[RMDB]
RNA sequence: GGGAACGACUCGAGUAGAGUCGAAAAGACGCGAGAGACGCGAGACGCGCAAUGGCAGAAGCCGCAAUAGAUCAUACGACGCAAGAGGCAAGACGGAGAGCGCGCACCUUGCAUCAAUAACCAAGAACAUAGCAUACGCUUUCGAGCGUAUGCUAUGAAAAGAAACAACAACAACAAC
Reactivity to DMS in 0.01 (KOAc 150mM, MgCl2 10mM, bicine 150mM(pH8.5), 24C), signal-to-noise 5, nucleotides 027 to 126: g010a090c110g010c040g010a150g020a090g010a080c040g010c050g030a090g010a110c040g000c020g020c030a080a080u020g000g000c080a100g000a090a110g030c040c010g010c110a110a120u040a100g000a100u010c090a120u030a110c130g010a050c090g000c100a060a050g000a100g000g000c010a030a130g020a110c070g020g000a110g010a160g000c040g020c100g010c040a070c050c010u000u000g010c040a070u010c020a030a060u020a080a150c070c050a090a080g010a100a150
Reactivity to 2A3 in 0.01 (KOAc 150mM, MgCl2 10mM, bicine 150mM(pH8.5), 24C), signal-to-noise 9, nucleotides 027 to 126: g060a020c020g020c020g010a030g020a010g030a120c030g020c030g030a010g010a030c030g030c010g010c030a040a110u070g050g000c020a030g040a170a020g040c000c010g010c030a030a060u080a110g070a030u080c030a030u120a150c110g040a030c030g050c050a030a040g030a030g110g000c040a050a010g030a020c040g060g030a060g000a010g070c020g000c000g000c010a040c000c000u010u050g000c000a020u020c020a040a130u130a110a050c060c030a050a030g050a080a030